RNA sequence: GGGAACGACUCGAGUAGAGUCGAAAACUCUCGUCUUCCUCGGUCAACCUCUUAAGUUCCUCUUCUUCCUCCCUGCUGAGGUUCUUUCCUCCCGCGCUCAGCUGCUUCCUCUUGUUCUUGAGGGCCUUCCUUCGUCGGUGAUCCUGCCUCUCCCUGUACUAAAAGGAAAGUUCGCUUUCCUUUUAGUAAAAGAAACAACAACAACAAC
Reactivity to 2A3 in 0.01 (KOAc 150mM, MgCl2 10mM, bicine 150mM(pH8.5), 24C), signal-to-noise 2, nucleotides 027 to 156: c020u040c020u020c020g040u020c000u100u020c010c010u010c030g030g010u030c050a070a080c020c000u060c040u120u230a130a060g030u060u030c010c010u040c010u070u020c020u110u050c020c020u030c020c010c000u000g000c000u030g020a030g020g000u020u060c020u080u120u040c010c010u040c000c030c000g040c010g020c010u030c020a030g000c010u040g010c010u070u050c000c010u070c020u080u140g070u180u090c020u020u050g040a060g020g000g030c000c020u060u090c000c000u030u060c040g070u020c010g000g030u030g010a040u010c010c010u020g020c000c000u050c000u010c020c000c000u010g010u010
Reactivity to DMS in 0.01 (KOAc 150mM, MgCl2 10mM, bicine 150mM(pH8.5), 24C), signal-to-noise 2, nucleotides 027 to 156: c050u010c020u010c030g020u000c040u010u000c030c010u010c060g020g020u000c050a090a140c030c000u000c050u000u010a090a190g000u000u010c020c010u000c030u000u010c050u000u010c020c020u010c020c030c010u000g020c080u020g010a090g030g010u000u000c050u000u000u000c040c000u000c010c010c050g010c090g010c020u010c030a100g010c030u000g030c040u010u000c020c030u000c040u000u000g020u000u000c080u010u000g000a120g020g000g030c040c020u000u000c020c010u000u000c040g000u000c040g030g000u000g020a090u010c030c020u000g020c000c030u000c030u010c020c010c020u000g030u000